[RMDB]
RNA sequence: GGGAACGACUCGAGUAGAGUCGAAAAGAUAUGGAUAGCUGAUGACCUACACUCCCUAUAAUCUCGGAAACGAGGUAGGGAAGUGUAGCAAGGCUAUCCUAAGUCAAAAGUAUCCUUCGGGAUACAACCUUUCAACAUACUUCGGUAUGUUGAAAGGAAAAGAAACAACAACAACAAC
Reactivity to 2A3 in 0.01 (KOAc 150mM, MgCl2 10mM, bicine 150mM(pH8.5), 24C), signal-to-noise 1, nucleotides 027 to 126: g030a020u060a020u180g010g010a000u000a000g010c000u020g010a290u160g000a220c010c000u010a000c000a020c020u030c040c020c000u030a050u060a230a300u130c010u000c000g060g000a070a080a050c020g010a010g000g010u020a000g020g010g000a040a130g000u000g010u000a000g000c020a000a050g010g000c000u000a000u000c000c000u000a040a030g050u000c010a000a080a000a150g000u000a000u000c000c000u050u070c300g130g000g000a000u010a000c020a020a020
Reactivity to DMS in 0.01 (KOAc 150mM, MgCl2 10mM, bicine 150mM(pH8.5), 24C), signal-to-noise 2, nucleotides 027 to 126: g000a030u000a300u010g000g000a000u000a000g020c010u000g010a150u010g000a090c300c010u000a010c000a030c000u000c000c000c000u000a060u000a300a100u010c000u000c010g010g000a110a120a130c020g000a000g000g010u000a020g000g000g030a000a010g020u000g020u000a010g020c030a020a110g010g010c000u000a010u000c000c000u000a010a040g010u000c060a060a100a080a180g020u000a000u000c000c000u000u010c230g070g000g000a010u000a020c000a070a070
The record gives the reactivity of an RNA of 177 nucleotides to 2A3 and DMS. The DMS profile rests on 1,661 reads. For DMS the reverse transcriptase was MarathonRT. For 2A3 the reverse transcriptase was SuperScript II with manganese. Conditions: 150 mM KOAc, 10 mM MgCl2 and 150 mM bicine (pH 8.5), 24 C.